[RMDB]
RNA sequence: GGGAACGACUCGAGUAGAGUCGAAAAGAUAUGGAUGGGUCACGGGAGCCACUGUUCGGAAACGAACAUUGGCGAGGAUCGUGCCCAUCCUAAGUCAAAGCGAGCAGUAGUUCGCUACUGCUCGCAAGUAUGUAUGUCUGUUCGCAGACAUACAUACAAAAGAAACAACAACAACAAC
Reactivity to DMS in 0.01 (KOAc 150mM, MgCl2 10mM, bicine 150mM(pH8.5), 24C), signal-to-noise 5, nucleotides 027 to 126: g000a020u000a050u010g000g010a020u000g010g000g010u020c030a010c010g020g020g010a220g020c000c000a010c110u000g010u000u000c010g020g010a010a010a050c000g010a010a010c000a000u000u000g000g020c010g010a140g000g010a100u000c020g030u000g000c010c000c000a010u000c000c000u000a000a050g000u000c010a140a150a180g010c000g000a010g010c000a010g030u000a010g010u010u010c300g020c010u000a000c000u000g010c010u000c000g030c010a000a030
Reactivity to 2A3 in 0.01 (KOAc 150mM, MgCl2 10mM, bicine 150mM(pH8.5), 24C), signal-to-noise 5, nucleotides 027 to 126: g010a000u010a010u050g010g000a000u000g000g010g080u300c170a000c020g050g050g110a110g000c010c010a000c000u000g000u000u000c000g000g000a000a010a010c010g000a010a000c000a000u010u010g010g030c020g010a040g080g030a180u030c010g000u010g000c000c000c000a000u010c000c000u000a000a000g000u000c020a070a110a030g010c000g000a010g000c000a000g000u030a000g000u060u170c300g030c140u000a010c000u000g000c000u000c000g000c000a000a000